An RNA of 207 nucleotides, treated with 2A3 and DMS and read out base by base. For 2A3, 2,100 sequencing reads were counted. For 2A3 the reverse transcriptase was SuperScript II with manganese.

[RMDB]
RNA sequence: GGGAACGACUCGAGUAGAGUCGAAAACGCACUAAGCUUGCCAUCAAUAUGGGUGCCAUGGAGGAGUCCGUGGCAUUCAGGUUGGCUAAGGAGGGAUGAACCGGGCCAGGGGUGAAAACCAGCAGCCAAGAGUUCCCGUGGUAGGCAGUAGUGGGAUACCAAAGGAAGAGUUCGCUCUUCCUUUGGUAAAAGAAACAACAACAACAAC
Reactivity to 2A3 in 0.01 (KOAc 150mM, MgCl2 10mM, bicine 150mM(pH8.5), 24C), signal-to-noise 2, nucleotides 027 to 156: c060g020c010a000c020u020a030a000g000c020u030u020g010c000c000a020u060c040a040a050u060a080u080g010g000g000u000g000c000c000a000u000g010g030a040g090g080a130g250u000c000c000g010u000g000g000c000a010u000u000c000a000g000g010u020u020g020g030c010u010a050a030g080g030a060g030g000g020a030u100g050a080a020c040c020g010g000g000c010c050a040g060g030g000g000u050g050a060a040a050a040c020c000a020g040c000a000g020c010c000a060a050g050a020g030u040u030c000c020c000g010u010g000g000u010a000g020g010c050a020g090u020a010g000u030g000g070g000a050u050
Reactivity to DMS in 0.01 (KOAc 150mM, MgCl2 10mM, bicine 150mM(pH8.5), 24C), signal-to-noise 1, nucleotides 027 to 156: c030g040c010a020c030u010a100a120g020c000u000u000g030c000c010a000u000c040a060a070u010a130u010g040g000g030u000g020c000c000a040u000g020g040a080g040g020a300g010u000c000c000g070u000g020g030c000a000u000u000c010a010g010g020u000u010g020g010c030u010a110a110g000g000a120g020g010g000a140u000g000a110a120c100c010g000g060g040c020c050a160g030g030g030g010u050g000a140a040a180a070c010c010a050g000c060a120g010c000c000a020a080g040a300g020u000u000c010c000c020g040u000g020g050u010a010g000g040c000a130g000u000a030g020u000g040g020g020a190u000